[RMDB]
An RNA of 177 nucleotides, treated with 2A3 and DMS and read out base by base. 2A3 adducts were read by reverse transcription with SuperScript II with manganese. For 2A3, 26,429 sequencing reads were counted. 2A3 is a SHAPE reagent: it acylates the 2'-hydroxyl of flexible nucleotides of all four kinds.
RNA sequence: GGGAACGACUCGAGUAGAGUCGAAAAAGUGGAUCCGAAUUACACGGAUCCUGGUUAGUUCUGGUUCAUCCAAGGGAUCCCUGAUUGCUGGAUCCGGAUCCACUAUUCCAGGAGGAUCCAACGAGCAGUACCUGAUAUAAUUCGUUAUAUCAGGUACAAAAGAAACAACAACAACAAC
Reactivity to 2A3 in 0.01 (KOAc 150mM, MgCl2 10mM, bicine 150mM(pH8.5), 24C), signal-to-noise 9, nucleotides 027 to 126: a010g040u030g000g010a010u010c010c010g030a050a090u180u110a130c080a020c090g020g000a000u000c000c000u000g020g030u070u100a110g010u120u090c080u100g060g020u090u240c080a120u070c080c030a080a080g040g000g000a010u010c010c010c020u080g060a170u050u160g050c090u060g010g010a010u000c020c000g000g000a000u000c010c000a010c000u020a070u080u020c010c000a010g070g070a060g030g020a040u000c020c010a030a040c060g060a030g040c070a020
Reactivity to DMS in 0.01 (KOAc 150mM, MgCl2 10mM, bicine 150mM(pH8.5), 24C), signal-to-noise 9, nucleotides 027 to 126: a050g020u000g010g000a010u000c000c010g020a110a080u000u010a130c140a080c250g000g000a020u000c000c010u000g000g010u000u000a080g010u010u010c120u000g010g010u000u010c190a150u010c030c030a080a160g010g000g000a010u000c000c010c080u000g010a110u000u000g020c100u000g000g000a010u000c010c020g000g000a010u000c010c000a040c010u000a080u000u000c020c020a130g010g010a120g000g000a030u000c020c020a050a060c090g000a110g020c200a140
The reactions ran in a buffer of 150 mM KOAc, 10 mM MgCl2 and 150 mM bicine (pH 8.5), at 24 C. Reactivities are given for positions 27 through 126.